[RMDB]
RNA sequence: GGGAACGACUCGAGUAGAGUCGAAAAAUAAUUUGUAUCUCCCAUAGGAAUGAAUAUAUAGAUGAGCUAUUUAAUGUAAGAGACAAAUUUAAUUCUGCAAAUAUUACAGGUCCAUAAUAUGUAACGUAACUAGUAUAUGUACCACUAGCACAACCAAGACUUACGCGUUAUUCGUAACGCGUAAGUCAAAAGAAACAACAACAACAAC
Reactivity to 2A3 in 0.01 (KOAc 150mM, MgCl2 10mM, bicine 150mM(pH8.5), 24C), signal-to-noise 1, nucleotides 027 to 156: a000u110a000a000u000u000u070g040u020a090u050c000u040c040c000c060a070u070a050g140g000a050a050u070g000a050a050u210a000u100a000u020a040g110a300u090g000a050g000c050u110a120u120u140u210a150a020u190g020u020a020a020g030a000g000a000c010a000a020a000u060u230u070a070a090u100u030c040u000g020c000a000a130a180u050a120u100u150a020c050a120g080g000u010c000c000a020u040a060a040u140a280u170g120u090a090a080c090g020u000a050a000c040u000a040g010u000a070u020a050u040g040u000a000c060c070a010c050u050a040g000c000a040c060a100a000c050c000a140a000